[RMDB]
RNA sequence: GGGAACGACUCGAGUAGAGUCGAAAAUGCAGCUGACGGGUCUGGCCGUCGCGCCAGAGCUGAUACAGCGGGCGGACCUGAACGGCGAUUUGCGGGCUGAAGGUAUCGAGACGCGCCACCAGGUCGCCACCUGCCCCGAUUUCGAUCGGGGCAGGUGAAAAGAAACAACAACAACAAC
Reactivity to 2A3 in 0.01 (KOAc 150mM, MgCl2 10mM, bicine 150mM(pH8.5), 24C), signal-to-noise 2, nucleotides 027 to 126: u170g000c030a000g000c010u030g010a030c020g000g060g190u000c010u000g000g010c000c020g300u120c110g000c060g000c000c000a000g000a000g020c000u000g040a070u070a200c000a010g010c000g000g040g000c050g000g080a160c000c000u040g020a070a020c040g000g000c000g070a050u040u040u250g110c030g010g040g040c040u070g090a110a030g150g010u100a210u130c090g000a010g000a050c110g010c040g010c070c000a040c010c060a000g000g000u010c000g000c000
Reactivity to DMS in 0.01 (KOAc 150mM, MgCl2 10mM, bicine 150mM(pH8.5), 24C), signal-to-noise 2, nucleotides 027 to 126: u010g090c070a260g000c000u000g010a090c000g040g000g000u010c000u000g000g010c030c030g000u020c300g020c040g110c010c000a020g000a040g000c000u000g000a100u010a140c000a000g000c000g000g010g000c000g030g010a020c050c010u000g000a060a180c240g000g000c000g010a190u010u030u000g010c060g000g010g040c030u020g000a150a050g000g040u000a110u030c050g000a100g040a050c210g010c000g010c000c000a110c050c000a000g000g000u030c000g000c010